[RMDB]
RNA sequence: GGGAACGACUCGAGUAGAGUCGAAAAGGUGGUCUCGGGUUCGAGUCUCGCUUUCGAUCCCUCGAUCUGCCACGUCUGUUCGAAGAGUAGUCUUCGUGGCAACUGGCAGUUAAACCGUGUAGUACCGAUGGAGGUUGGAAACAAUGCACAUCACUACCCCUUACUUUCCCUUCGGGGAAAGUAAGGGAAAAGAAACAACAACAACAAC
Reactivity to 2A3 in 0.01 (KOAc 150mM, MgCl2 10mM, bicine 150mM(pH8.5), 24C), signal-to-noise 3, nucleotides 027 to 156: g040g020u020g010g040u000c010u000c020g140g020g030u240u240c050g010a020g010u040c090u050c080g080c040u080u060u030c040g080a080u020c050c010c000u040c020g040a060u030c000u020g000c000c000a020c070g020u020c160u040g000u000u020c010g000a030a000g000a030g110u300a100g120u050c000u010u010c000g010u040g020g010c000a000a000c000u010g000g000c000a010g020u060u190a090a040a000c050c010g040u040g020u060a030g000u010a150c060c150g000a000u030g010g050a120g050g040u020u020g020g000a030a110a010c000a040a060u090g090c030a000c010a020u020c020a030c030u020a020c000
The record gives the reactivity of an RNA of 207 nucleotides to 2A3. The 2A3 profile rests on 1,468 reads. The reactions ran in a buffer of 150 mM KOAc, 10 mM MgCl2 and 150 mM bicine (pH 8.5), at 24 C.